Source information:
Chemical mapping of a 177-nucleotide RNA with DMS. The RNA was probed in 150 mM KOAc, 10 mM MgCl2 and 150 mM bicine (pH 8.5) at 24 C. For DMS, 773 sequencing reads were counted. The data come from the RNA Mapping Database (RMDB), library OK2TST.

[RMDB]
RNA sequence: GGGAACGACUCGAGUAGAGUCGAAAAUUGCUGAAGUCAGGCUGACGUUUCUGGUUGAAGGCGUUGCGACCUUCCUGACCUUCUUCCGUCAUGUAGAACAGCAUGGUGGCGUUGCCCGCCAGCUCCAUCCCUCAGUCGGUUUCGACCGACUGAGGGAAAAAGAAACAACAACAACAAC
Reactivity to DMS in 0.01 (KOAc 150mM, MgCl2 10mM, bicine 150mM(pH8.5), 24C), signal-to-noise 1, nucleotides 027 to 126: u000u000g020c020u000g010a130a080g010u000c040a140g020g000c030u000g010a040c050g010u010u000u000c140u060g000g020u000u010g020a120a010g010g000c100g020u000u000g050c070g000a100c060c040u000u010c030c300u000g000a110c040c020u000u000c070u000u010c060c040g000u000c000a030u020g060u010a120g000a110a050c130a110g030c010a050u000g000g030u010g010g010c060g000u000u000g000c250c080c010g020c070c030a060g010c050u000c110c100a130